[RMDB]
RNA sequence: GGGAACGACUCGAGUAGAGUCGAAAAAGCGCGCAAUGUGUACAUGGGUAUUCCCCCAUAUCUGUGUACUACAGCCGAGAGGACUUGUGGGGUGUUGUGUGCAGUGCUAGUGUGUUUGGUGCGCGAAGUGUAUAUAUUAUUUCGAUAAUAUAUACACAAAAGAAACAACAACAACAAC
Reactivity to 2A3 in 0.01 (KOAc 150mM, MgCl2 10mM, bicine 150mM(pH8.5), 24C), signal-to-noise 5, nucleotides 027 to 126: a000g030c030g000c010g000c020a050a110u090g020u010g000u020a000c000a000u010g020g010g000u010a010u060u120c000c000c000c010c000a000u000a010u000c000u000g010u000g000u000a000c000u050a010c000a010g020c000c000g040a030g020a020g030g030a050c030u060u070g020u060g030g020g000g010u030g010u040u060g020u010g010u020g000c040a020g010u010g030c010u030a020g020u020g010u000g010u040u060u060g010g000u020g010c030g000c010g020a090a020
Reactivity to DMS in 0.01 (KOAc 150mM, MgCl2 10mM, bicine 150mM(pH8.5), 24C), signal-to-noise 6, nucleotides 027 to 126: a080g010c010g010c030g020c020a070a060u010g010u000g000u000a000c000a000u000g000g000g020u000a010u010u030c040c000c010c010c070a280u010a000u000c010u000g020u000g010u000a010c000u030a030c050a070g000c020c030g000a110g000a100g010g000a060c060u010u020g010u010g010g000g010g010u010g000u000u010g000u010g020u000g020c040a050g010u010g010c040u010a050g010u010g020u010g000u010u010u000g010g010u010g000c030g010c030g010a050a100
Structure probing data (2A3 and DMS) for a 177-nucleotide construct.
DMS adducts were read by reverse transcription with MarathonRT.
The RNA was probed in 150 mM KOAc, 10 mM MgCl2 and 150 mM bicine (pH 8.5) at 24 C.
2A3 is a SHAPE reagent: it acylates the 2'-hydroxyl of flexible nucleotides of all four kinds.
Reactivities are given for positions 27 through 126.
The DMS profile rests on 35,734 reads.
Source: RMDB library OK1LIB, as collected in RNAgym.